[RMDB]
RNA sequence: GGGAACGACUCGAGUAGAGUCGAAAAGAAGACUAAAUCAGGCAUAACUAUACAAAAUUCUGGCCUAUUAAUUGCACAUAUAGACUAAAUAAUGUCCACUCUAACCUACAACCUUUCUACAAUAAUGUUACAUCUACUAAUUACAAAAUAUUAAUAAGUGAGUCGCUGGGUUCGCCCGGUGGCUCACAAAAGAAACAACAACAACAAC
Reactivity to 2A3 in 0.01 (KOAc 150mM, MgCl2 10mM, bicine 150mM(pH8.5), 24C), signal-to-noise 2, nucleotides 027 to 156: g010a020a020g000a000c010u040a000a090a000u060c030a000g000g010c000a040u060a150a000c040u060a030u060a080c060a000a090a000a020u090u110c020u040g010g030c000c000u010a040u070u000a040a020u070u050g010c030a060c000a020u110a000u030a020g010a010c040u100a040a000a030u140a020a040u120g020u000c010c010a070c010u020c010u040a030a080c000c020u000a080c000a020a040c010c020u050u150u030c010u000a050c000a030a000u110a070a010u010g010u010u000a020c000a010u000c040u000a070c020u040a030a030u110u170a020c040a000a110a070a060u300a060u300u300a030a030u300a150a000